Annotation: The record gives the reactivity of an RNA of 207 nucleotides to 2A3. Source: RMDB library M2RFPK, as collected in RNAgym.

RNA sequence: GGGAACGACUCGAGUAGAGUCGAAAAUUGCUCAGGCAGCGUAACGCUGCUUGAAAGACCACAUGAAAGUCCUGGCGGGUUAAGCGCCGCCAGGCGGGGUUCGGAGGCGCCUGGCAUCAGAAGCCUCAUUACAUGGAAGACUUCGGUCUUCCAUGAAGGGAGUAUUAUUGUUCGCAAUAAUACUCCCAAAAGAAACAACAACAACAAC
Reactivity to 2A3 in 0.01 (KOAc 150mM, MgCl2 10mM, bicine 150mM(pH8.5), 24C), signal-to-noise 1, nucleotides 027 to 156: u120u050g040c020u010c000a000g030g010c000a000g020c010g020u100a160a060c150g000c000u010g000c040u000u000g000a010a000a000g010a030c030c030a100c020a100u170g090a170a010a010g300u110c000c030u000g000g000c000g040g000g000u040u190a190a050g090c190g030c090c040g000c010c000a000g030g040c020g000g000g000g000u050u300c160g100g000a030g010g030c030g060c020c030u060g150g000c000a030u050c000a010g030a030a000g000c000c020u010c000a000u000u100a000c000a000u000g000g060a000a000g000a000c000u050u050c220g160g000u030c000u000u000c040c000a000u010g000a000a050